The record gives the reactivity of an RNA of 207 nucleotides to DMS and 2A3.

[RMDB]
RNA sequence: GGGAACGACUCGAGUAGAGUCGAAAAGUGCAUGCCGAGGGGCGGUUGGCCUCGUAAAAAGCCGCAAAAAAAUAGUCGCAAACGACGAAAACUACGCUUUAGCAGCUUAAUAACCUGCUUAGAGCCCUCUCUCCCUAGCCUCCGCUCUUAGGACGGGGUAGCAAAAGAAGUUCGCUUCUUUUGCUACAAAAGAAACAACAACAACAAC
Reactivity to DMS in 0.01 (KOAc 150mM, MgCl2 10mM, bicine 150mM(pH8.5), 24C), signal-to-noise 2, nucleotides 027 to 156: g070u000g000c060a120u000g000c090c010g030a120g000g000g020g000c020g000g030u000u000g030g030c010c020u000c040g020u000a050a060a060a100a070g000c000c020g070c050a000a010a000a090a100a110a230u000a090g030u000c030g030c050a110a130a150c050g010a040c020g010a060a060a100a100c000u000a070c120g020c040u000u000u000a070g000c010a030g020c000u020u000a150a120u000a230a080c300c010u000g000c010u000u000a060g000a100g000c040c010c040u000c020u010c040u000c020c010c020u000a100g020c020c030u000c000c020g030c010u000c010u000u010a090g000g020a040c000g010g010g000
Reactivity to 2A3 in 0.01 (KOAc 150mM, MgCl2 10mM, bicine 150mM(pH8.5), 24C), signal-to-noise 1, nucleotides 027 to 156: g090u050g030c050a030u110g060c040c020g030a040g000g000g010g060c040g000g020u050u050g040g020c010c030u050c040g010u060a030a070a020a000a040g040c060c000g000c000a090a060a010a000a000a030a160u100a040g000u010c000g030c060a100a110a070c060g040a000c010g050a040a020a020a020c090u140a040c110g020c000u020u020u000a010g010c000a000g010c010u020u020a040a000u010a030a040c000c020u010g000c010u070u140a020g010a010g030c000c030c000u050c000u000c020u020c010c020c000u010a030g000c000c010u050c010c010g000c000u000c000u030u030a020g000g020a000c010g000g000g000